[RMDB]
RNA sequence: GGGAACGACUCGAGUAGAGUCGAAAACAACCAGUGCGAAUCUGAGAUAGAUACUCACAAUCUCGGUGAGUGGAACUGCUAUCGAGAGUGACGACGCGUAUCCACGUCUGAGGACUGUAUGGCACUGUGUGGCACUGCGUCUGCUCAGUAUAUACUAAAUGGCUUAUGAAUUCGUUCAUAAGCCAUUAAAAGAAACAACAACAACAAC
Reactivity to 2A3 in 0.01 (KOAc 150mM, MgCl2 10mM, bicine 150mM(pH8.5), 24C), signal-to-noise 5, nucleotides 027 to 156: c020a010a050c020c010a020g020u030g040c030g080a070a070u050c050u050g010a010g010a040u090a060g070a030u120a080c020u040c000a030c010a070a180u040c020u020c070g040g010u070g040a040g020u020g020g030a080a060c080u090g040c000u040a010u060c040g020a020g000a000g090u050g100a040c050g000a010c010g020c010g030u040a080u090c010c010a010c020g030u010c050u060g050a090g060g010a050c010u070g040u240a150u190g050g000c030a010c030u030g030u020g030u040g070g000c020a020c100u070g000c010g030u000c020u030g020c010u000c020a000g090u040a020u060a040u120a160c160u080a030
Reactivity to DMS in 0.01 (KOAc 150mM, MgCl2 10mM, bicine 150mM(pH8.5), 24C), signal-to-noise 5, nucleotides 027 to 156: c040a110a230c030c000a110g030u000g030c020g010a110a110u000c040u000g010a160g020a100u000a060g000a210u000a070c030u010c030a070c030a110a110u010c040u010c090g000g040u010g000a080g020u000g020g010a070a190c090u000g030c040u010a080u000c020g020a120g020a100g030u000g020a140c110g010a030c020g000c030g030u000a150u000c030c080a020c020g000u000c020u010g010a130g030g010a090c060u010g010u000a080u010g030g020c030a060c030u000g020u000g030u000g010g020c050a090c060u000g020c070g010u000c040u000g000c000u000c040a080g020u000a100u000a100u000a100c060u000a100